[RMDB]
Source: RMDB library OK1LIB, as collected in RNAgym. Chemical mapping of a 177-nucleotide RNA with DMS and 2A3. Values cover nucleotides 27 to 126. The DMS profile rests on 9,706 reads.
RNA sequence: GGGAACGACUCGAGUAGAGUCGAAAAUUUUGCAUGAUUGUUGCCAAUUCACUGCAGUAUACUUUGGCAACGGGAGUAUCUUUUAUGGCCAAGACAUAAACCGCGACAUACUUGGCUCUCCUGGCUACAUCUAUGCCUAGUUCGCUAGGCAUAGAUGAAAAGAAACAACAACAACAAC
Reactivity to DMS in 0.01 (KOAc 150mM, MgCl2 10mM, bicine 150mM(pH8.5), 24C), signal-to-noise 5, nucleotides 027 to 126: u000u030u020u000g010c100a050u020g000a160u030u040g000u000u010g000c010c000a040a060u010u030c060a080c100u010g000c040a020g030u020a120u040a080c140u010u000u010g020g000c040a010a020c010g010g000g020a130g000u030a030u000c050u000u010u020u020a100u030g000g010c000c000a020a040g010a110c120a040u020a030a090a130c090c060g010c070g000a100c150a060u030a060c080u010u010g010g020c000u010c040u000c010c010u010g010g020c060u000a270
Reactivity to 2A3 in 0.01 (KOAc 150mM, MgCl2 10mM, bicine 150mM(pH8.5), 24C), signal-to-noise 8, nucleotides 027 to 126: u220u240u100u070g080c070a050u110g070a160u110u150g010u030u030g000c020c000a020a020u110u100c090a060c120u130g010c040a040g070u120a060u080a200c090u060u060u040g000g000c020a030a020c000g000g010g000a040g010u120a130u100c080u040u200u070u110a110u190g070g000c010c010a040a000g060a100c020a080u170a120a140a030c040c050g060c020g070a040c030a050u180a060c010u010u020g010g000c030u000c000u000c010c010u050g100g000c020u040a040